[RMDB]
RNA sequence: GGGAACGACUCGAGUAGAGUCGAAAAGAUAUGGAUGAUGGACAUGCUGUAUGGUCGGAAACGACCAGACAGCAACAGCCAUAUCCUAAGUCAAAGAGGCACUUAUACUUCGGUAUAAGUGCCUCAACACUCCACAACGGUUCGCCGUUGUGGAGUGAAAAGAAACAACAACAACAAC
Reactivity to DMS in 0.01 (KOAc 150mM, MgCl2 10mM, bicine 150mM(pH8.5), 24C), signal-to-noise 1, nucleotides 027 to 126: g000a040u000a300u010g000g010a000u000g010a060u000g010g040a040c080a170u000g010c000u000g010u000a060u000g000g000u010c000g010g030a080a110a130c000g000a020c000c000a030g020a010c000a000g000c000a020a050c200a140g000c000c000a010u000a020u000c000c000u000a100a090g010u000c080a070a080a140g010a000g010g020c000a000c000u010u000a000u000a010c010u000u010c160g040g020u000a020u010a000a000g020u000g020c000c020u000c000a000a010